Chemical mapping of a 177-nucleotide RNA with 2A3 and DMS.
In probing experiments dimethyl sulfate is read out at A N1 and C N3, which are open when not base-paired.
For 2A3, 13,785 sequencing reads were counted.
2A3 adducts were read by reverse transcription with SuperScript II with manganese.
For DMS, 7,770 sequencing reads were counted.
RNA sequence: GGGAACGACUCGAGUAGAGUCGAAAAGAUAUGGAUCCAAGAGACAUGAGAUCUUCGGAAACGAAUUUCUCAACAGCUCUCGGAUCCUAAGUCAAAAGCACAUUACGGGUUCGCCCGUAAUGUGCAAUCUUAUUCUACAGUUCGCUGUAGAAUAAGAAAAAGAAACAACAACAACAAC
Reactivity to 2A3 in 0.01 (KOAc 150mM, MgCl2 10mM, bicine 150mM(pH8.5), 24C), signal-to-noise 3, nucleotides 027 to 126: g000a000u010a000u070g000g010a000u000c010c010a010a000g030a000g100a150c220a300u090g000a010g000a010u000c000u000u010c020g010g000a010a010a000c000g000a000a000u000u030u000c010u010c010a110a260c150a070g020c000u010c010u010c030g000g000a010u000c000c000u000a000a000g020u020c020a020a040a090a120g000c000a000c000a010u000u010a000c000g000g000g120u050u120c240g130c030c000c000g000u010a000a000u000g000u000g000c000a000a000
Reactivity to DMS in 0.01 (KOAc 150mM, MgCl2 10mM, bicine 150mM(pH8.5), 24C), signal-to-noise 5, nucleotides 027 to 126: g000a010u000a090u020g000g000a010u000c000c000a030a020g000a020g010a100c090a140u010g000a000g000a010u000c020u000u000c000g010g000a010a020a050c000g000a000a000u000u000u000c000u000c000a070a140c300a160g010c000u000c000u000c060g000g010a010u000c000c000u000a000a040g000u010c000a080a080a120a120g010c010a000c000a000u000u000a000c000g000g000g000u000u010c260g010c000c000c000g010u000a000a000u000g010u000g010c000a010a010